RNA sequence: GGGAACGACUCGAGUAGAGUCGAAAAACUGAGUUUAUUUGAGUACUUAGACGGCCAUUAGAGCAACGAUCUAGCACCAUAUAAAUUCAGUAUAAAACCUUUACCUCCUGUUCGCAGGAGGUAAAGGCCUAUACGGAAUCUUCGGAUUCCGUAUAGGAAAAGAAACAACAACAACAAC
Reactivity to 2A3 in 0.01 (KOAc 150mM, MgCl2 10mM, bicine 150mM(pH8.5), 24C), signal-to-noise 2, nucleotides 027 to 126: a000c000u000g000a000g010u010u010u000a060u030u020u030g080a090g020u020a020c020u090u080a020g010a000c010g030g000c000c030a210u150u210a110g060a040g120c030a250a200c030g060a090u000c000u000a010g000c000a000c010c000a010u030a010u000a040a000a000u020u010c000a000g000u000a000u060a020a010a000a010c000c000u010u000u000a000c000c000u000c000c000u000g010u020u070c230g010c080a000g010g010a000g000g000u000a000a000a000g000g000
Reactivity to DMS in 0.01 (KOAc 150mM, MgCl2 10mM, bicine 150mM(pH8.5), 24C), signal-to-noise 1, nucleotides 027 to 126: a060c000u000g000a020g010u000u000u000a010u000u010u020g000a170g020u000a040c010u000u000a010g010a020c020g010g030c010c020a300u000u000a160g000a170g000c000a030a060c040g000a140u000c020u000a010g010c030a040c000c010a010u000a010u010a000a000a000u000u000c010a000g000u000a030u010a100a050a070a260c000c000u000u000u000a000c000c000u010c000c010u000g000u000u010c190g020c000a010g000g000a000g010g010u000a000a000a010g000g000
Chemical mapping of a 177-nucleotide RNA with 2A3 and DMS. The data come from the RNA Mapping Database (RMDB), library RFMREP. The DMS profile rests on 1,312 reads. The reactions ran in a buffer of 150 mM KOAc, 10 mM MgCl2 and 150 mM bicine (pH 8.5), at 24 C.